Overview
Structure probing data (2A3) for a 207-nucleotide construct. For 2A3, 1,393 sequencing reads were counted. Reactivities are given for positions 27 through 156. Conditions: 150 mM KOAc, 10 mM MgCl2 and 150 mM bicine (pH 8.5), 24 C.
[RMDB]
RNA sequence: GGGAACGACUCGAGUAGAGUCGAAAAGGGGUCUUCGCUAAGACAGUCCCAUGGAGCUUUUGACGCUCUGAAGCCUCCACGGAGCGAUAAGCUCCCUGGGACAAUGACGGCGAAGACGGAGGCACCCAAAACGUAGAAGUGUUCGCACUUCUACGAAGAUGGAGCAUUUGUUCGCAAAUGCUCCAUCAAAAGAAACAACAACAACAAC
Reactivity to 2A3 in 0.01 (KOAc 150mM, MgCl2 10mM, bicine 150mM(pH8.5), 24C), signal-to-noise 2, nucleotides 027 to 156: g090g000g050g020u010c000u010u000c000g000c010u020a100a030g070a190c040a060g100u000c000c000c000a010u020g000g000a000g020c040u180u250u240u110g110a090c020g020c000u000c000u000g020a060a000g010c000c000u000c010c000a010c000g010g010a000g010c020g070a100u060a290a020g000c000u010c000c000c010u010g030g000g000a010c010a000a020u020g000a020c030g060g000c000g000a000a000g010a000c010g010g000a010g010g010c000a050c000c000c000a030a070a030a050c020g000u000a000g000a000a010g010u000g070u150u210c240g070c050a000c000u000u010c000u000a000c000g010a000a000
Description
The data come from the RNA Mapping Database (RMDB), library RNAMAK.